[RMDB]
RNA sequence: GGGAACGACUCGAGUAGAGUCGAAAACGUCGAGGAUCCUGCGGACGUGAAACCACCGAAGCUAGAGACGCAGCAGUCCCAGAACUCCGAUUGCAGCGUGGUCAAUAUGCCGACUAAUGCCGUGGACCAUGCAAGCCGAAUUCGUUCGGCUUGCAUGAAAAGAAACAACAACAACAAC
Reactivity to DMS in 0.01 (KOAc 150mM, MgCl2 10mM, bicine 150mM(pH8.5), 24C), signal-to-noise 2, nucleotides 027 to 126: c110g000u000c040g000a190g000g020a090u000c060c020u010g000c020g010g000a170c110g000u000g000a060a090a130c090c020a150c040c000g000a180a090g000c060u000a060g010a130g000a020c060g040c090a060g000c000a120g000u000c010c030c010a150g000a070a120c140u000c050c060g000a100u000u000g030c040a090g030c020g010u000g000g020u000c070a060a110u000a090u000g010c140c090g010a050c080u040a000a110u000g020c040c090g000u000g000g020a110c100
Reactivity to 2A3 in 0.01 (KOAc 150mM, MgCl2 10mM, bicine 150mM(pH8.5), 24C), signal-to-noise 1, nucleotides 027 to 126: c020g060u010c040g000a010g050g090a170u100c040c070u250g260c010g060g010a040c000g000u010g070a100a040a030c050c040a020c030c050g070a080a010g070c000u050a020g020a020g010a190c010g030c020a050g000c010a020g020u000c050c010c000a030g040a160a160c060u020c090c000g090a110u010u070g000c010a020g020c020g050u020g000g020u040c050a010a080u110a170u300g000c020c000g040a040c050u140a130a030u130g040c020c000g100u060g010g010a020c000
The record gives the reactivity of an RNA of 177 nucleotides to DMS and 2A3. Conditions: 150 mM KOAc, 10 mM MgCl2 and 150 mM bicine (pH 8.5), 24 C. Values cover nucleotides 27 to 126. For 2A3 the reverse transcriptase was SuperScript II with manganese.